[RMDB]
An RNA of 177 nucleotides, treated with DMS and 2A3 and read out base by base. For DMS, 923 sequencing reads were counted. As a SHAPE reagent, 2A3 marks flexible, mostly unpaired nucleotides at the ribose 2'-OH. For 2A3 the reverse transcriptase was SuperScript II with manganese.
RNA sequence: GGGAACGACUCGAGUAGAGUCGAAAACAACUGCAAAAUGAUGCUAAGAAUGCUGUAUCGGCAAUGGAUGCGGGUAAAACGGUGACUCAUCAAGGGGUUGCCGCUUCUGAUGAGGCAGUACAGGUGACUGCUAUCACCACUUCGGUGGUGAUAGCAGAAAAGAAACAACAACAACAAC
Reactivity to DMS in 0.01 (KOAc 150mM, MgCl2 10mM, bicine 150mM(pH8.5), 24C), signal-to-noise 2, nucleotides 027 to 126: c060a130a080c120u000g000c030a030a070a160a060u010g000a080u000g020c010u030a080a130g000a070a120u010g010c080u010g000u000a030u000c070g030g050c060a050a070u020g030g000a110u000g010c080g000g000g010u020a010a030a080a180c060g010g020u000g000a040c020u020c020a050u020c300a040a060g040g000g000g030u000u000g000c030c050g000c050u010u010c060u010g000a140u020g000a090g000g000c020a030g010u000a080c060a060g030g000u030g010a130
Reactivity to 2A3 in 0.01 (KOAc 150mM, MgCl2 10mM, bicine 150mM(pH8.5), 24C), signal-to-noise 1, nucleotides 027 to 126: c030a000a030c020u070g000c010a000a000a110a160u170g120a080u060g010c010u060a070a040g100a100a100u080g040c030u040g000u090a080u070c020g000g000c110a050a050u070g080g030a050u080g010c010g000g000g000u120a010a010a000a000c020g000g030u010g020a020c010u000c020a070u080c110a190a100g050g050g000g000u010u040g120c040c000g000c010u060u030c000u010g080a080u040g000a050g050g000c000a000g010u070a010c020a020g000g180u100g110a050